Chemical mapping of a 177-nucleotide RNA with 2A3 and DMS. The 2A3 profile rests on 641 reads. The DMS profile rests on 1,010 reads. DMS adducts were read by reverse transcription with MarathonRT. Reactivities are given for positions 27 through 126. It was measured as part of the RMDB library OK2TST.
[RMDB]
RNA sequence: GGGAACGACUCGAGUAGAGUCGAAAAACAAGUUGAAACAUUUGCCGUUACUGGGGGCAUAAAAAGGCGCACAACCAAUUGGUCAUUCAGGGCCGCGCCCGAAGCCGAGCCUAUUAACGAAGGCGUACAUCGAGUUGAAUUUCGAUUCAACUCGAUGAAAAGAAACAACAACAACAAC
Reactivity to 2A3 in 0.01 (KOAc 150mM, MgCl2 10mM, bicine 150mM(pH8.5), 24C), signal-to-noise 1, nucleotides 027 to 126: a000c100a100a090g050u060u070g160a230a040a000c070a090u130u050u260g070c000c050g020u080u020a050c060u050g020g030g060g010g070c010a000u160a010a130a030a000a010g040g000c040g000c000a010c020a050a190c070c000a010a250u180u120g020g000u080c010a100u200u160c140a200g000g030g040c050c010g020c000g000c000c020c020g060a020a000g020c020c000g030a030g080c050c020u100a060u100u010a030a040c080g050a050a030g050g020c000g000u000a030
Reactivity to DMS in 0.01 (KOAc 150mM, MgCl2 10mM, bicine 150mM(pH8.5), 24C), signal-to-noise 2, nucleotides 027 to 126: a040c100a060a070g000u000u020g030a150a090a050c060a070u030u000u000g010c120c010g030u010u010a040c110u000g000g000g020g030g000c040a030u010a010a060a000a100a080g010g000c020g020c000a100c100a060a100c090c030a070a060u000u000g000g010u010c090a070u000u000c170a150g020g000g020c080c080g050c070g000c000c000c030g020a110a060g010c050c010g010a100g010c000c020u020a100u000u000a010a040c140g000a110a060g010g010c070g010u010a110